[RMDB]
RNA sequence: GGGAACGACUCGAGUAGAGUCGAAAAGCGUACUACAGCGUUUGACGGUAAAGGGAGCGAACUUGGGCCUCAUCCCAAAUAGGAUGAGGCACUUGUUCGCGAAGAACUUUACCCGAGCUGUAUCGCAAACCCGUCCAUGGUUCGCCAUGGACGGGAAUCAAGGAAGAAUGUUCGCAUUCUUCCUUGAAAAAGAAACAACAACAACAAC
Reactivity to 2A3 in 0.01 (KOAc 150mM, MgCl2 10mM, bicine 150mM(pH8.5), 24C), signal-to-noise 4, nucleotides 027 to 156: g010c020g000u110a120c060u020a010c010a010g000c000g050u190u280u220g100a090c040g000g000u000a000a010a010g020g000g010a040g000c000g000a000a000c010u000u000g000g020g000c010c010u000c000a010u030c000c040c020a140a300a150u300a080g000g000a000u000g010a010g000g000c000a000c000u000u000g000u000u000c000g000c000g000a000a000g000a000a000c000u000u000u000a000c000c000c000g010a010g000c000u010g000u000a010u300c000g000c020a000a010a140c010c000c000g000u000c000c000a000u000g010g080u050u080c240g020c090c010a000u000g010g000a000c000g000g010g000a000a030
Reactivity to DMS in 0.01 (KOAc 150mM, MgCl2 10mM, bicine 150mM(pH8.5), 24C), signal-to-noise 3, nucleotides 027 to 156: g030c000g040u010a040c080u020a030c000a020g020c010g000u000u010u000g020a150c120g000g010u000a010a030a020g000g020g000a300g010c010g010a010a010c010u000u000g020g000g010c000c010u000c010a000u010c000c000c020a050a140a220u010a030g000g010a010u000g000a010g020g000c000a000c000u000u000g010u000u000c000g010c000g000a010a100g010a100a090c000u000u000u000a010c010c000c000g000a070g010c000u000g000u000a010u000c010g010c010a060a050a130c010c000c010g010u000c000c000a020u000g010g020u010u010c300g040c000c000a030u000g000g000a010c000g010g010g010a000a010